[RMDB]
RNA sequence: GGGAACGACUCGAGUAGAGUCGAAAAUCAAUAUCAGUGCUAAGUAAAUUUGUCUAAGGGAUGGAGCUGCCUGGCAGGCUGUGUGUUCUGCGAGGUCAGAGGCUUCAAGGGGAAAGGUGGACGCGUCCUUGCCCUGCAUGUCCAGCAGCCAUGUGGGCUUAGCGCACUUAUUCGUAAGUGCGCUAAGAAAAGAAACAACAACAACAAC
Reactivity to DMS in 0.01 (KOAc 150mM, MgCl2 10mM, bicine 150mM(pH8.5), 24C), signal-to-noise 2, nucleotides 027 to 156: u000c030a090a120u010a110u010c050a090g040u000g030c030u000a080a110g000u000a060a070a120u000u000u000g000u000c040u000a070a130g020g000g010a080u000g000g000a100g030c060u000g030c020c010u000g010g030c010a060g020g010c040u000g040u000g040u000g010u000u020c000u000g010c010g020a030g040g030u000c030a060g020a150g030g000c030u010u000c050a060a140g010g040g000g000a040a040a050g020g040u000g020g010a100c080g000c040g000u020c030c000u000u000g010c040c020c010u010g010c020a030u010g010u000c010c030a160g000c060a170g020c300c000a010u010g010u000g000g000g000
Reactivity to 2A3 in 0.01 (KOAc 150mM, MgCl2 10mM, bicine 150mM(pH8.5), 24C), signal-to-noise 3, nucleotides 027 to 156: u060c050a060a050u140a030u130c070a050g040u040g040c040u100a120a010g030u080a120a190a190u130u110u120g040u020c030u070a030a070g030g010g010a050u070g030g010a000g010c010u010g020c040c000u010g060g000c020a000g040g000c070u040g090u040g020u010g070u210u110c010u000g020c010g150a020g030g020u040c060a000g020a010g060g010c010u030u020c030a020a030g000g000g000g000a040a040a030g060g010u070g020g050a010c020g020c030g060u040c000c020u050u060g040c000c020c000u000g000c020a020u040g010u030c030c000a030g030c010a000g020c050c010a040u050g000u050g020g010g000